[RMDB]
RNA sequence: GGGAACGACUCGAGUAGAGUCGAAAAGCAUUGGGAAAGUUAAUCAAAAGUGCAUCAAAACUUUCCCUAAACGAAAUCAAAAUCGUUAAGAUGCACUUUUGACAUCGAUUAAGAUGAAUAGACACAAGACCUAUAGAUGUUUCGACAUCUAUAGGUCAAAAGAAACAACAACAACAAC
Reactivity to 2A3 in 0.01 (KOAc 150mM, MgCl2 10mM, bicine 150mM(pH8.5), 24C), signal-to-noise 4, nucleotides 027 to 126: g030c020a060u140u260g030g000g030a070a060a050g050u110u110a090a040u050c040a010a000a020a010g000u010g000c000a000u010c040a000a070a000a150c010u000u000u000c000c020c010u000a010a000a000c000g020a010a010a050u190c070a050a060a030a130u030c020g000u040u050a060a030g020a030u010g000c000a000c020u010u000u000u010g020a010c000a000u020c020g160a160u220u290a130a110g000a000u030g020a070a140u100a100g150a030c030a000c020a150a060
Reactivity to DMS in 0.01 (KOAc 150mM, MgCl2 10mM, bicine 150mM(pH8.5), 24C), signal-to-noise 4, nucleotides 027 to 126: g010c140a090u000u000g010g010g010a150a080a130g010u000u010a100a160u000c020a010a010a010a010g020u000g020c000a000u010c030a060a120a060a100c120u010u000u000c000c000c000u000a030a040a030c000g010a000a060a060u010c280a050a050a190a090u000c020g010u000u000a180a160g000a010u010g000c000a010c000u000u000u000u000g010a110c020a000u010c010g000a140u000u020a080a140g000a010u010g000a070a050u000a070g010a130c130a030c180a050a100
Structure probing data (2A3 and DMS) for a 177-nucleotide construct.
For DMS the reverse transcriptase was MarathonRT.
For 2A3, 3,784 sequencing reads were counted.
Values cover nucleotides 27 to 126.
For DMS, 2,681 sequencing reads were counted.
The RNA was probed in 150 mM KOAc, 10 mM MgCl2 and 150 mM bicine (pH 8.5) at 24 C.